The record gives the reactivity of an RNA of 177 nucleotides to DMS and 2A3.
The RNA was probed in 150 mM KOAc, 10 mM MgCl2 and 150 mM bicine (pH 8.5) at 24 C.
For 2A3, 3,203 sequencing reads were counted.
Values cover nucleotides 27 to 126.
It was measured as part of the RMDB library RFMREP.
As a SHAPE reagent, 2A3 marks flexible, mostly unpaired nucleotides at the ribose 2'-OH.
RNA sequence: GGGAACGACUCGAGUAGAGUCGAAAACCAGGAUAUGGUUCGCCAUAUCCUGGAAAAGCCCUGAAGCGGAUGCCGCCCAAACGCCCGUUCAGACGGCAAAAUCCUAUAGCAGUUCGCUGCUAUAGGACAGAAUUAAAUAGUUCGCUAUUUAAUUCUGAAAAGAAACAACAACAACAAC
Reactivity to DMS in 0.01 (KOAc 150mM, MgCl2 10mM, bicine 150mM(pH8.5), 24C), signal-to-noise 3, nucleotides 027 to 126: c020c000a010g010g010a010u000a010u000g010g000u000u010c140g020c010c010a000u000a000u000c000c000u000g000g000a020a030a130a170g000c000c000c020u010g010a120a110g010c080g000g010a110u000g010c030c050g010c010c020c040a050a090a110c080g000c080c070c130g000u010u010c100a090g010a060c080g000g010c050a070a070a090a210u000c000c000u000a010u000a000g000c000a010g020u010u000c240g020c010u000g020c000u000a000u000a000g000g000a050
Reactivity to 2A3 in 0.01 (KOAc 150mM, MgCl2 10mM, bicine 150mM(pH8.5), 24C), signal-to-noise 2, nucleotides 027 to 126: c010c000a010g000g000a000u000a010u020g050g000u040u070c160g010c080c000a010u000a000u000c000c010u000g000g010a000a000a000a000g010c000c000c040u030g120a100a020g090c030g040g050a110u140g060c050c050g060c020c020c030a080a150a050c090g010c000c070c010g000u040u030c020a050g050a100c020g000g000c010a060a060a000a050u000c000c000u000a000u010a010g000c010a000g010u040u090c150g050c120u000g010c000u000a000u000a010g000g000a010

Description:
For DMS the reverse transcriptase was MarathonRT.